[RMDB]
Chemical mapping of a 177-nucleotide RNA with 2A3 and DMS.
RNA sequence: GGGAACGACUCGAGUAGAGUCGAAAAGGAUCGUACUCUGUCUAUAGAGUACGUACGGUACGACGUCAUGCGAUCCCAUGGUCUAGGUACCUAGCCAUGUAUGGAUCCUAGGAUAUCUAGCUAGACACAUCUAAGACACCUUCGGGUGUCUUAGAUGAAAAGAAACAACAACAACAAC
Reactivity to 2A3 in 0.01 (KOAc 150mM, MgCl2 10mM, bicine 150mM(pH8.5), 24C), signal-to-noise 2, nucleotides 027 to 126: g050g010a080u200c010g020u000a000c000u000c000u050g110u230c080u170a200u160a230g000a000g000u000a010c000g010u010a010c060g010g030u040a020c010g020a010c010g090u050c020a030u130g000c030g030a020u040c000c000c010a050u070g030g000u020c000u000a000g050g050u080a150c020c000u000a000g030c000c010a070u130g110u130a230u140g040g000a030u030c040c000u020a010g000g060a040u010a010u070c030u010a030g060c020u030a040g060a060c060a000
Reactivity to DMS in 0.01 (KOAc 150mM, MgCl2 10mM, bicine 150mM(pH8.5), 24C), signal-to-noise 4, nucleotides 027 to 126: g020g010a140u010c010g010u000a000c010u000c010u000g000u010c280u020a100u010a020g000a030g010u000a000c000g020u000a050c070g010g010u000a090c160g010a050c050g030u000c070a110u010g010c120g000a070u000c010c010c010a080u000g000g010u020c010u000a020g000g010u000a060c110c000u000a000g010c010c000a040u000g010u000a110u000g000g010a200u000c120c000u000a020g010g000a120u000a020u000c030u000a120g000c040u010a080g020a140c160a190

High DMS reactivity at an A or C suggests that its Watson-Crick edge is free. Reactivities are given for positions 27 through 126. The RNA was probed in 150 mM KOAc, 10 mM MgCl2 and 150 mM bicine (pH 8.5) at 24 C.